About this RNA
The data come from the RNA Mapping Database (RMDB), library PDB130. The record gives the reactivity of an RNA of 207 nucleotides to 2A3 and DMS.
RNA sequence: GGGAACGACUCGAGUAGAGUCGAAAACUAUGACGAAAUGGGAAACGGGUUAAUAUUCCCGUGCCACGGGGUCGAUCACGCUGGGCAUCGCCCAGUCGAACCGUCCAACUCCGUGGAAGCCGUAAUGGCAGGAAGCGGACGAACGGCGGCAUAGGGACGAACGUAAGAUGUUCGCAUCUUACGUUCGAAAAGAAACAACAACAACAAC
Reactivity to 2A3 in 0.01 (KOAc 150mM, MgCl2 10mM, bicine 150mM(pH8.5), 24C), signal-to-noise 3, nucleotides 027 to 156: c060u080a060u210g020a020c030g040a060a110a070u130g010g000g040a100a220a000c010g000g000g040u060u060a140a030u080a100u190u060c000c000c000g000u000g040c010c000a020c010g030g000g020g020u030c010g030a050u080c090a000c110g000c000u000g000g020g000c000a240u190c180g000c000c000c000a000g000u010c000g000a040a000c000c010g000u000c000c000a000a010c010u000c010c000g000u050g010g010a000a000g010c000c000g090u220a060a160u240g010g010c020a020g120g010a010a010g000c000g000g000a000c020g000a070a030c020g010g000c000g000g000c040a080u080a100g030g020g050a030
Reactivity to DMS in 0.01 (KOAc 150mM, MgCl2 10mM, bicine 150mM(pH8.5), 24C), signal-to-noise 2, nucleotides 027 to 156: c010u000a050u000g020a160c050g000a110a060a050u000g020g010g000a090a090a060c010g040g040g010u000u000a060a170u010a220u000u000c000c000c000g010u000g020c000c000a100c000g000g040g030g020u010c040g010a170u010c050a050c080g050c030u020g030g010g000c000a160u000c160g000c000c000c000a030g010u000c020g000a070a010c000c030g020u010c020c000a030a100c010u020c020c000g000u000g010g000a220a130g000c000c010g030u000a140a130u000g040g040c010a080g020g010a300a300g010c030g000g000a060c070g000a030a040c030g000g000c010g020g030c010a100u000a040g010g000g030a230

For 2A3 the reverse transcriptase was SuperScript II with manganese.